[RMDB]
RNA sequence: GGGAACGACUCGAGUAGAGUCGAAAAAUUCAAAUAAUUAAUACGAUAUAAACCAUUCAAGGAAGGAGUAUAAUAAAAUGACUAAUCUUAAUACGCAACAUCAACCAACAACAUCAAAUAUUAUUAUGUUUCCAACUAAAUUCGUUUAGUUGGAAACAAAAGAAACAACAACAACAAC
Reactivity to 2A3 in 0.01 (KOAc 150mM, MgCl2 10mM, bicine 150mM(pH8.5), 24C), signal-to-noise 2, nucleotides 027 to 126: a000u100u060c020a080a000a100u220a040a000u250u200a170a210u130a120c040g000a000u040a000u100a150a110a030c000c000a080u110u130c190a200a000g040g040a000a050g020g030a020g060u000a000u000a220a030u130a090a010a050a010u110g030a090c000u000a000a000u030c030u080u090a140a000u190a050c070g000c000a000a070c040a070u000c000a010a120c010c000a000a020c000a000a010c000a040u140c010a130a040a250u210a030u190u030a030u060u000a090u050
This 177-nucleotide RNA was probed chemically with 2A3. The 2A3 profile rests on 721 reads. The reactions ran in a buffer of 150 mM KOAc, 10 mM MgCl2 and 150 mM bicine (pH 8.5), at 24 C. For 2A3 the reverse transcriptase was SuperScript II with manganese. The data come from the RNA Mapping Database (RMDB), library RFM100.